[RMDB]
Chemical mapping of a 177-nucleotide RNA with 2A3 and DMS. The reactions ran in a buffer of 150 mM KOAc, 10 mM MgCl2 and 150 mM bicine (pH 8.5), at 24 C. The data come from the RNA Mapping Database (RMDB), library OK1LIB. As a SHAPE reagent, 2A3 marks flexible, mostly unpaired nucleotides at the ribose 2'-OH. 2A3 adducts were read by reverse transcription with SuperScript II with manganese.

RNA sequence: GGGAACGACUCGAGUAGAGUCGAAAAACAGCCGAUGCAACGGGAGUUGAUGGUGUUAUUAUUCCUAAACGUCGUUCAGUUACACUAACGCAAACAGUUGCAAAAGCCUCAACAGGUGCAAUUGAACCGUUAUAGACCGCUUCGGCGGUCUAUAACGAAAAGAAACAACAACAACAAC
Reactivity to 2A3 in 0.01 (KOAc 150mM, MgCl2 10mM, bicine 150mM(pH8.5), 24C), signal-to-noise 2, nucleotides 027 to 126: a010c030a020g080c000c000g140a150u190g070c000a010a020c030g000g080g050a110g060u030u010g030a070u070g000g000u040g090u040u070a130u120u060a050u050u120c000c000u070a090a050a000c060g150u090c010g000u040u050c050a010g000u050u070a030c050a020c030u060a160a040c020g030c060a030a010a100c020a150g030u000u020g000c000a070a000a090a000g020c030c040u190c110a080a140c020a060g040g000u060g030c010a050a050u030u100g030a040a010c050
Reactivity to DMS in 0.01 (KOAc 150mM, MgCl2 10mM, bicine 150mM(pH8.5), 24C), signal-to-noise 2, nucleotides 027 to 126: a030c020a110g010c010c040g010a190u020g000c150a050a010c040g040g000g020a160g100u020u010g010a090u020g000g050u070g020u010u010a150u030u030a210u040u050c040c050u000a020a060a080c070g000u070c070g080u000u000c000a010g080u060u000a100c060a000c020u060a110a030c070g050c080a000a040a300c160a160g000u000u060g000c140a170a180a030a100g000c040c040u000c100a040a010c180a090g030g030u000g000c050a000a000u030u000g000a200a080c030